Chemical mapping of a 177-nucleotide RNA with 2A3. High 2A3 reactivity points to a flexible backbone, as in loops and unpaired stretches.

[RMDB]
RNA sequence: GGGAACGACUCGAGUAGAGUCGAAAACGCCGAAGAGCUGGACUCGGUUAUCCGCGUUUUGGGCGAAAACGGCCAGGAAGCCGUCGGUUCAAUGGGCGACGAUACCCCCUUUGCCGUGCUCUCCAGCGGUACUGGCGACUUUCGAGUCGCCAGUACCAAAAGAAACAACAACAACAAC
Reactivity to 2A3 in 0.01 (KOAc 150mM, MgCl2 10mM, bicine 150mM(pH8.5), 24C), signal-to-noise 1, nucleotides 027 to 126: c050g030c000c060g100a120a040g040a060g120c000u000g010g140a120c030u030c100g000g020u030u120a120u030c000c050g050c060g010u000u020u130u060g210g040g060c120g000a050a000a000a030c000g040g060c080c010a190g090g050a060a010g000c050c000g010u030c030g080g030u030u010c010a010a010u140g010g040g000c060g000a080c080g030a050u090a070c000c000c000c000c100u060u060u070g000c010c050g020u030g000c000u000c000u000c030c020a060g000c000
Conditions: 150 mM KOAc, 10 mM MgCl2 and 150 mM bicine (pH 8.5), 24 C.